[RMDB]
RNA sequence: GGGAACGACUCGAGUAGAGUCGAAAACUGAUGGAACGCUUCAUCACUGCGGCCAUGACCGUCGCGGGCGAGAUCGAACAGACCGGAUCAUUCCGAACAAUCCGCAACCCCGUCAUUAAAGCCUCAAUCUAAGCGGAUGAUUCGUCAUCCGCUUAGAAAAAGAAACAACAACAACAAC
Reactivity to DMS in 0.01 (KOAc 150mM, MgCl2 10mM, bicine 150mM(pH8.5), 24C), signal-to-noise 2, nucleotides 027 to 126: c090u000g020a060u000g010g030a090a110c140g010c080u000u000c040a030u000c020a080c100u000g030c060g000g010c030c060a070u010g000a050c100c160g000u000c020g010c080g000g010g020c100g020a060g020a060u020c070g010a090a060c090a130g020a100c140c060g010g000a050u010c060a120u020u010c040c030g020a080a080c110a020a080u000c010c020g040c040a080a080c130c020c020c100g000u010c060a070u000u010a040a020a130g020c040c020u010c080a040a160
Reactivity to 2A3 in 0.01 (KOAc 150mM, MgCl2 10mM, bicine 150mM(pH8.5), 24C), signal-to-noise 1, nucleotides 027 to 126: c020u040g000a020u030g010g030a140a100c090g000c140u130u020c030a120u000c020a030c070u060g030c010g000g040c040c000a090u120g030a060c030c010g020u020c010g030c000g040g000g000c030g050a060g040a130u040c030g020a020a050c010a090g050a050c030c000g020g000a030u090c040a100u140u060c030c020g020a050a000c040a050a020u060c010c000g000c000a000a040c000c000c000c000g020u050c000a030u060u170a060a110a010g030c000c020u020c080a020a120

The record gives the reactivity of an RNA of 177 nucleotides to DMS and 2A3. DMS adducts were read by reverse transcription with MarathonRT. The RNA was probed in 150 mM KOAc, 10 mM MgCl2 and 150 mM bicine (pH 8.5) at 24 C.